[RMDB]
RNA sequence: GGGAACGACUCGAGUAGAGUCGAAAAAAUCAGUCCUGAAAAACUGGUGCGUGAAAUGUUGGCCAAAAAAUGCAAACAUUAAGUUGGUACCCUGCGGAUCGGGAGUGAAGGUCCUCCGAAGAAGAGUUUUGUCCACAACGCGUGCCGCAUCCGGCAAGAUUCCAUGCAGUUUCGACUGCAUGGAAUCAAAAGAAACAACAACAACAAC
Reactivity to 2A3 in 0.01 (KOAc 150mM, MgCl2 10mM, bicine 150mM(pH8.5), 24C), signal-to-noise 1, nucleotides 027 to 156: a000a000u130c020a010g040u030c030c000u080g070a020a020a020a020a010c060u050g020g010u010g000c090g030u040g090a070a100a000u040g030u080u030g040g040c030c060a020a110a050a090a100a060u190g020c050a010a080a050c040a060u130u150a060a090g120u090u030g040g000u040a050c010c000c040u030g010c100g030g000a050u080c000g060g000g010a040g050u060g060a050a000g010g010u070c000c000u020c000c020g080a130a040g010a050a020g040a030g020u000u060u030u030g040u030c000c000a030c020a070a090c100g000c010g060u060g040c000c030g000c010a010u000c010c000g040g000c030a040a000

The record gives the reactivity of an RNA of 207 nucleotides to 2A3. For 2A3 the reverse transcriptase was SuperScript II with manganese. The RNA was probed in 150 mM KOAc, 10 mM MgCl2 and 150 mM bicine (pH 8.5) at 24 C.